[RMDB]
Chemical mapping of a 177-nucleotide RNA with 2A3 and DMS. The 2A3 profile rests on 2,413 reads. The reactions ran in a buffer of 150 mM KOAc, 10 mM MgCl2 and 150 mM bicine (pH 8.5), at 24 C. The data come from the RNA Mapping Database (RMDB), library TTRDES. For 2A3 the reverse transcriptase was SuperScript II with manganese. For DMS the reverse transcriptase was MarathonRT.
RNA sequence: GGGAACGACUCGAGUAGAGUCGAAAAGAUAUGGAAUGGUGUUGACAUGGAUCGUGUCGGAAACGACACCGGAUCCAACAGCAACCCAUUCCUAAGUCAAAGGCGAUCGUCUUCGGACGAUCGCCAAGCACCGUAAUAAGUUCGCUUAUUACGGUGCAAAAGAAACAACAACAACAAC
Reactivity to 2A3 in 0.01 (KOAc 150mM, MgCl2 10mM, bicine 150mM(pH8.5), 24C), signal-to-noise 1, nucleotides 027 to 126: g000a000u010a020u080g020g000a000a000u010g000g040u120g070u120u000g120a200c290a300u300g040g010a010u000c010g010u000g000u000c000g000g010a020a010a000c010g010a000c000a000c030c030g180g060a010u000c010c010a020a020c060a030g000c000a000a000c000c000c000a000u000u000c000c000u000a000a010g030u000c010a050a160a060g000g000c140g000a010u000c000g060u000c060u230u300c300g120g000a000c060g000a020u000c000g060c010c000a000a000
Reactivity to DMS in 0.01 (KOAc 150mM, MgCl2 10mM, bicine 150mM(pH8.5), 24C), signal-to-noise 1, nucleotides 027 to 126: g000a030u000a060u000g000g000a030a020u000g040g030u040g000u010u010g000a050c130a210u000g010g010a000u000c000g000u000g020u020c010g000g000a010a010a050c010g020a000c000a010c300c300g020g010a020u010c010c010a050a110c190a190g030c000a000a010c020c020c010a000u000u000c010c000u010a010a080g000u000c010a070a140a190g010g030c000g000a060u010c030g010u000c010u000u020c250g030g050a080c000g010a000u000c000g020c000c030a020a020